Chemical mapping of a 177-nucleotide RNA with 2A3 and DMS.
[RMDB]
RNA sequence: GGGAACGACUCGAGUAGAGUCGAAAAGAUAUGGAAGCCAUGCAUUCGCGCCGAGAACUUCGGAAACGAAGUUUAUCGAACUACGAAUGUGGCUUCCUAAGUCAAAAUCGUGCGUUCGCGCACGAAACUUGUGAGCAUAGUUCGCUAUGCUCACAAGAAAAGAAACAACAACAACAAC
Reactivity to 2A3 in 0.01 (KOAc 150mM, MgCl2 10mM, bicine 150mM(pH8.5), 24C), signal-to-noise 2, nucleotides 027 to 126: g010a020u020a020u060g000g010a020a010g000c000c010a060u200g060c030a030u120u020c050g030c170g080c270c070g020a000g000a010a000c000u000u000c000g000g000a040a010a010c000g000a000a010g010u000u000u030a300u010c010g030a060a090c070u230a110c230g000a010a000u030g000u060g020g040c000u010u000c000c000u000a020a020g020u020c010a060a010a010a240u060c000g000u000g020c010g000u010u110c300g000c010g010c130a010c000g010a030a010a010
Reactivity to DMS in 0.01 (KOAc 150mM, MgCl2 10mM, bicine 150mM(pH8.5), 24C), signal-to-noise 2, nucleotides 027 to 126: g000a080u000a300u010g000g000a000a010g000c000c010a040u000g030c050a020u000u000c010g010c250g010c140c000g000a030g000a010a030c000u000u000c000g000g000a100a060a230c010g010a000a020g000u000u000u000a100u000c000g000a060a150c170u000a030c000g000a040a000u000g060u000g000g000c000u000u000c000c000u010a000a060g000u010c030a060a060a060a170u000c020g020u010g000c000g000u000u010c300g020c030g010c000a000c000g000a020a040a120
About this RNA:
The data come from the RNA Mapping Database (RMDB), library TTRDEL. The DMS profile rests on 1,337 reads. For 2A3, 2,999 sequencing reads were counted.